[RMDB]
RNA sequence: GGGAACGACUCGAGUAGAGUCGAAAAAGUAUGACCCGUCCGGAGGUUGGCGGUGGGGUAGAGCACUGAUAGGAGGAUCCGGGGGGUGACACCCUCGCCCUCCUGUCAAACUCCGAAUCCACCGCCGCAACAAUUAUGGGUUCGCCCAUAAUUGUUGAAAAGAAACAACAACAACAAC
Reactivity to 2A3 in 0.01 (KOAc 150mM, MgCl2 10mM, bicine 150mM(pH8.5), 24C), signal-to-noise 4, nucleotides 027 to 126: a000g230u190a150u170g080a090c010c010c000g060u170c080c060g090g080a100g040g050u090u190g010g010c000g000g000u000g000g000g000g010u050a010g000a000g000c040a010c070u010g000a010u010a000g000g000a000g000g010a010u060c060c000g000g000g000g000g000g000u020g010a020c020a070c030c000c000u000c000g010c000c000c000u000c000c000u000g000u000c000a000a000a020c000u000c020c010g030a060a040u000c000c000a000c000c000g000c000c000g000
Reactivity to DMS in 0.01 (KOAc 150mM, MgCl2 10mM, bicine 150mM(pH8.5), 24C), signal-to-noise 8, nucleotides 027 to 126: a090g020u020a060u020g000a110c010c000c010g010u030c070c060g000g010a110g010g010u010u000g020g020c000g010g010u010g000g000g000g000u020a120g000a010g000c060a080c140u010g000a010u000a010g000g000a010g000g000a040u010c300c010g000g000g000g000g000g020u000g020a160c170a230c000c000c000u000c000g000c300c000c000u000c000c000u000g010u000c000a010a080a210c000u000c070c020g010a110a110u070c000c000a010c010c000g010c000c000g010

Background: The record gives the reactivity of an RNA of 177 nucleotides to 2A3 and DMS. The data come from the RNA Mapping Database (RMDB), libraries RFM100 and RFMREP. The RNA was probed in 150 mM KOAc, 10 mM MgCl2 and 150 mM bicine (pH 8.5) at 24 C.